[RMDB]
RNA sequence: GGGAACGACUCGAGUAGAGUCGAAAAGGUACCCUGAGUGUCCAGAGUCUAAUCCGAGUUGACCUUUAGUGAGGGACUUGGUCAGGUUUCUCCUGGUGGGCCUGGCCCAGGAAGGGCAUGGAGGAGGUCAAGGAGGUGGUUUCGACCACCUCCUUGAAAAAGAAACAACAACAACAAC
Reactivity to DMS in 0.01 (KOAc 150mM, MgCl2 10mM, bicine 150mM(pH8.5), 24C), signal-to-noise 2, nucleotides 027 to 126: g000g020u000a100c110c000c040u010g010a190g020u010g020u010c000c010a070g020a140g000u000c020u000a110a180u010c030c030g010a050g000u010u000g000a220c020c010u000u000u000a120g020u000g010a050g010g010g000a100c010u000u010g010g000u000c050a030g000g010u010u010u000c140u020c050c020u010g000g040u000g020g000g000c000c000u000g000g010c070c010c040a010g000g010a090a070g000g010g020c040a090u000g010g000a110g000g000a110g000g010